Source: RMDB library 15KREP, as collected in RNAgym. Structure probing data (DMS and 2A3) for a 177-nucleotide construct. The DMS profile rests on 1,311 reads. Conditions: 150 mM KOAc, 10 mM MgCl2 and 150 mM bicine (pH 8.5), 24 C.
RNA sequence: GGGAACGACUCGAGUAGAGUCGAAAAGUGAUAUUUUUGACACUCCUAGCGUACUUCAAGCUACUCUUUCUGAGUUUUCACACUUAGCUACCUUUGCUGAGUUGGAAGCUGCGCAGAAAGCCUAUCAGCCAUAUUAUCUCUUCGGAGAUAAUAUGGCAAAAGAAACAACAACAACAAC
Reactivity to DMS in 0.01 (KOAc 150mM, MgCl2 10mM, bicine 150mM(pH8.5), 24C), signal-to-noise 2, nucleotides 027 to 126: g000u000g020a120u000a000u000u000u000u000u010g010a090c010a050c010u000c030c030u000a070g000c020g000u000a020c070u000u030c130a160a160g010c140u000a070c110u000c000u020u000u000c000u000g020a030g000u000u000u000u000c000a000c210a000c000u000u000a010g020c010u020a140c300c220u000u000u000g000c000u000g000a010g000u000u000g010g000a000a000g000c040u000g010c270g000c030a040g000a050a020a050g020c270c090u000a050u000c040a170
Reactivity to 2A3 in 0.01 (KOAc 150mM, MgCl2 10mM, bicine 150mM(pH8.5), 24C), signal-to-noise 3, nucleotides 027 to 126: g030u040g030a050u030a160u100u120u060u110u120g060a030c020a000c010u070c010c000u020a020g020c020g040u030a040c040u110u190c060a090a030g040c020u070a070c030u040c000u040u060u010c010u020g000a000g000u000u010u010u010c030a070c000a000c040u030u000a000g000c000u060a120c040c080u200u170u070g020c000u010g010a020g000u020u010g000g000a000a000g030c030u050g060c070g000c030a000g020a000a040a010g000c020c010u150a190u110c040a020